[RMDB]
RNA sequence: GGGAACGACUCGAGUAGAGUCGAAAAUAUCCAGCCAUCGAACUACUCACCAUGCUAUGUUCAUUAGUAGUAGUCAUGGUGUUUGGCCCAACCAUACAAAUGCUUUUUGGACUCGUCCUCACAUGGAUGCCUACUAUCCAUUCGUGGAUAGUAGGCAAAAAGAAACAACAACAACAAC
Reactivity to 2A3 in 0.01 (KOAc 150mM, MgCl2 10mM, bicine 150mM(pH8.5), 24C), signal-to-noise 2, nucleotides 027 to 126: u130a050u020c010c000a000g020c010c010a030u020c050g070a100a000c010u010a000c010u040c050a050c060c000a000u030g030c000u130a100u240g120u270u130c020a080u120u090a020g080u030a000g000u000a010g010u100c020a030u020g020g000u010g060u030u060u050g020g000c010c010c010a020a020c010c010a060u100a180c040a060a130a040u110g050c010u070u060u030u090u050g080g020a050c000u000c040g000u000c000c010u050c010a060c030a090u110g020g020a030
Reactivity to DMS in 0.01 (KOAc 150mM, MgCl2 10mM, bicine 150mM(pH8.5), 24C), signal-to-noise 3, nucleotides 027 to 126: u000a080u000c030c010a180g000c040c030a040u010c110g010a070a090c040u000a010c030u020c140a090c040c080a020u000g000c060u010a020u000g030u020u020c100a070u000u000a070g020u000a050g010u000a010g010u020c010a010u010g000g000u000g020u010u000u000g000g030c030c030c000a080a150c120c080a080u000a090c130a040a100a100u000g000c050u000u000u000u000u000g000g000a070c080u000c080g000u000c040c000u000c110a070c160a110u000g010g010a190